[RMDB]
RNA sequence: GGGAACGACUCGAGUAGAGUCGAAAAGAUAUGGACGUGCCAAAUCCUCGCUAAGAAACUCGGAAACGAGUCUUAGAACUACGAGACAGGCACGUCCUAAGUCAAAACAUCACGUUCGCGUGAUGAAGACUAGGAAUGGGUUCGCCCAUUCCUAGUCAAAAGAAACAACAACAACAAC
Reactivity to 2A3 in 0.01 (KOAc 150mM, MgCl2 10mM, bicine 150mM(pH8.5), 24C), signal-to-noise 3, nucleotides 027 to 126: g020a030u040a030u110g000g000a000c010g030u000g000c010c020a090a100a060u190c050c020u020c020g060c020u010a030a020g050a190a300a140c010u000c000g020g010a050a050a040c000g020a000g060u000c000u010u000a000g000a100a050c080u130a080c160g020a020g040a080c090a170g000g000c010a000c000g000u000c000c000u000a010a020g000u000c000a000a000a070a120c010a000u000c000a000c020g030u080u070c300g000c000g080u010g000a000u000g030a070a020
Reactivity to DMS in 0.01 (KOAc 150mM, MgCl2 10mM, bicine 150mM(pH8.5), 24C), signal-to-noise 2, nucleotides 027 to 126: g000a040u010a300u010g000g020a000c000g030u000g000c010c010a070a180a280u000c130c000u000c010g060c000u000a000a010g010a080a070a060c000u000c000g010g000a060a100a210c000g060a010g000u000c010u010u010a010g010a070a050c170u000a230c040g000a020g020a060c190a300g020g000c010a010c000g000u000c000c000u030a010a090g010u030c040a050a070a060a140c000a000u010c000a000c010g000u000u000c210g000c040g020u000g010a000u000g010a100a120
Overview
An RNA of 177 nucleotides, treated with 2A3 and DMS and read out base by base. The RNA was probed in 150 mM KOAc, 10 mM MgCl2 and 150 mM bicine (pH 8.5) at 24 C. The data come from the RNA Mapping Database (RMDB), library TTRDEL. For DMS the reverse transcriptase was MarathonRT.